Chemical mapping of a 177-nucleotide RNA with DMS. For DMS, 2,083 sequencing reads were counted. Values cover nucleotides 27 to 126. For DMS the reverse transcriptase was MarathonRT.

[RMDB]
RNA sequence: GGGAACGACUCGAGUAGAGUCGAAAAGAUAUGGAUCCACCAGGCGAAGAACUAUGGGUCGGAAACGACCCUGUAGGGAGCCUGCGUGGAUCCUAAGUCAAAAGAAAGACAGUUCGCUGUCUUUCAACAUAGCACACCAGUUCGCUGGUGUGCUAUGAAAAGAAACAACAACAACAAC
Reactivity to DMS in 0.01 (KOAc 150mM, MgCl2 10mM, bicine 150mM(pH8.5), 24C), signal-to-noise 2, nucleotides 027 to 126: g010a020u010a080u020g000g000a000u000c000c010a010c000c030a030g000g030c010g040a140a200g030a160a200c020u000a050u000g020g000g000u000c000g010g010a030a020a060c000g020a010c000c000c020u010g030u000a030g010g000g030a120g050c000c000u010g010c250g010u000g000g000a000u000c000c000u000a010a100g000u000c010a120a070a150a160g000a000a020a010g010a020c000a020g020u000u010c280g010c010u000g030u000c000u010u000u000c000a080a230